[RMDB]
RNA sequence: GGGAACGACUCGAGUAGAGUCGAAAAAGCACCUUGGCUUGUACGAGAAGGACAACGAGCAGAAGACCGAUCCGCUCACCGCUCUGCUACACACCAUCGCCAGUACCAGUGGCAAUGCCUUCAAGCCACUGAUGCAGAUGUUCGCAUCUGCAUCAGUAAAAGAAACAACAACAACAAC
Reactivity to 2A3 in 0.01 (KOAc 150mM, MgCl2 10mM, bicine 150mM(pH8.5), 24C), signal-to-noise 2, nucleotides 027 to 126: a000g090c050a060c020c000u020u020g010g000c010u030u050g030u050a050c110g040a050g020a220a030g000g030a050c020a110a050c120g030a000g010c040a020g020a160a000g020a060c000c080g070a090u000c020c060g000c040u010c020a060c000c040g050c010u010c020u050g020c050u120a060c060a000c000a010c050c020a050u080c070g010c010c020a020g010u050a120c030c030a020g020u050g000g050c010a010a020u100g020c010c000u040u060c020a030a020g000c010c020
Reactivity to DMS in 0.01 (KOAc 150mM, MgCl2 10mM, bicine 150mM(pH8.5), 24C), signal-to-noise 4, nucleotides 027 to 126: a040g000c100a090c080c020u000u010g020g000c040u010u000g010u000a090c130g020a160g020a060a060g030g040a110c100a090a110c140g020a050g000c020a020g010a100a070g010a140c130c090g010a110u000c030c030g000c030u010c010a070c080c070g000c060u010c020u000g000c000u000a070c050a050c100a070c110c040a060u000c040g010c030c040a060g030u000a090c120c100a090g000u000g010g030c010a070a060u000g010c040c020u000u000c040a090a180g010c030c030
An RNA of 177 nucleotides, treated with 2A3 and DMS and read out base by base.
It was measured as part of the RMDB library OK2TST.
For DMS the reverse transcriptase was MarathonRT.
For 2A3 the reverse transcriptase was SuperScript II with manganese.
For DMS, 2,468 sequencing reads were counted.
Reactivities are given for positions 27 through 126.